An RNA of 177 nucleotides, treated with DMS and 2A3 and read out base by base. The RNA was probed in 150 mM KOAc, 10 mM MgCl2 and 150 mM bicine (pH 8.5) at 24 C. The data come from the RNA Mapping Database (RMDB), library OK2TRN.
RNA sequence: GGGAACGACUCGAGUAGAGUCGAAAAUUAUGCAUCUUGGCAGCCAAUAUUUUUGUCUCUAGGGCAUAAAUUAUGCAUCAGGUACCUCUGAAACUCAGAGACCAAGGAAAAAGGAGGUAAUUUGGAAUGAAUAAUCAUGUUUCGACAUGAUUAUUCAAAAAGAAACAACAACAACAAC
Reactivity to DMS in 0.01 (KOAc 150mM, MgCl2 10mM, bicine 150mM(pH8.5), 24C), signal-to-noise 5, nucleotides 027 to 126: u000u000a030u000g010c010a070u010c030u000u010g010g010c130a060g010c070c070a050a080u010a070u000u000u000u000u000g010u000c000u000c070u000a070g010g000g000c010a030u000a010a040a080u000u000a080u000g010c060a130u010c100a080g010g000u000a030c050c020u000c000u000g010a110a110a130c110u000c070a060g010a100g010a090c050c100a060a080g000g000a020a040a060a110a240g000g000a020g000g010u000a030a070u000u000u010g000g010a130a140
Reactivity to 2A3 in 0.01 (KOAc 150mM, MgCl2 10mM, bicine 150mM(pH8.5), 24C), signal-to-noise 3, nucleotides 027 to 126: u060u040a020u050g000c000a070u020c040u070u060g070g000c080a000g030c010c020a070a030u090a190u100u230u030u030u020g040u010c010u010c010u070a040g060g010g000c010a000u040a040a120a010u160u130a070u090g090c020a050u030c020a040g100g000u030a060c020c010u000c000u020g040a070a060a060c050u060c030a030g030a030g020a150c010c020a070a070g050g000a100a110a010a020a010g020g000a010g010g010u060a050a080u070u060u070g060g040a130a090